[RMDB]
RNA sequence: GGGAACGACUCGAGUAGAGUCGAAAAUUGUAAUUUUGAUGUGGUUGUGGGAGGCGGCGAGAACGGCCGUUUACCUAUGCCACCAUCUUGGUUCUCUAAAACAUUCAGCUCCUUCGGGAGCUGAAUGCAUAACCUCAUGCUUCGGCAUGAGGUUAUGAAAAGAAACAACAACAACAAC
Reactivity to DMS in 0.01 (KOAc 150mM, MgCl2 10mM, bicine 150mM(pH8.5), 24C), signal-to-noise 3, nucleotides 027 to 126: u000u010g020u020a080a110u000u000u000u000g010a030u000g020u000g000g020u000u010g060u000g010g020g010a120g000g000c010g000g020c020g010a130g030a090a130c300g000g000c010c000g030u000u000u000a140c000c000u000a030u000g000c000c000a010c140c100a010u000c020u000u000g000g010u000u000c010u000c030u000a080a090a060a270c000a020u000u010c000a010g000c000u000c000c000u000u010c210g010g040g000a000g010c010u000g000a000a000u000g010
Reactivity to 2A3 in 0.01 (KOAc 150mM, MgCl2 10mM, bicine 150mM(pH8.5), 24C), signal-to-noise 2, nucleotides 027 to 126: u060u050g030u080a020a080u030u090u120u120g050a030u010g020u010g010g010u070u140g020u080g010g010g000a040g000g030c030g020g000c020g020a140g090a190a010c060g090g000c000c020g010u030u040u050a070c010c000u020a020u060g000c000c000a000c010c000a000u020c010u000u090g080g000u040u030c030u010c050u050a050a100a070a070c000a000u000u010c000a000g010c000u000c010c020u100u130c220g040g000g010a000g070c010u000g000a010a000u000g000